Structure probing data (2A3) for a 207-nucleotide construct. Source: RMDB library OK3TST, as collected in RNAgym. 2A3 adducts were read by reverse transcription with SuperScript II with manganese. Values cover nucleotides 27 to 156. The RNA was probed in 150 mM KOAc, 10 mM MgCl2 and 150 mM bicine (pH 8.5) at 24 C.
[RMDB]
RNA sequence: GGGAACGACUCGAGUAGAGUCGAAAAGCUAACCUUGUACUUUUACGGGCCCAUUCCUCUUGGUCAUUUCUUUCCUUCACUGUAUCUGGAACUGUGAAUGGCAAGGCCAGUGCUUCUACCUCUCUGUAGAAUCCGAUGGGCUACAUUUGGUGAGGUAGAUGGUGGCUAAUUUCGAUUAGCCACCAUCAAAAGAAACAACAACAACAAC
Reactivity to 2A3 in 0.01 (KOAc 150mM, MgCl2 10mM, bicine 150mM(pH8.5), 24C), signal-to-noise 2, nucleotides 027 to 156: g050c090u090a090a090c000c030u040u070g130u290a180c070u080u220u110u150a120c110g080g020g000c010c000c000a010u080u050c100c050u040c040u060u050g020g020u050c050a190u110u170u070c100u020u100u060c020c000u020u010c030a000c020u050g040u100a180u180c070u220g170g080a130a050c000u010g000u010g030a060a050u140g030g030c040a030a060g020g000c010c010a020g040u050g040c000u010u030c000u050a020c000c000u050c040u030c060u140g000u040a010g030a100a060u100c090c010g000a040u090g040g010g000c010u000a040c000a010u030u090u080g060g010u050g010a020g000g000u010a030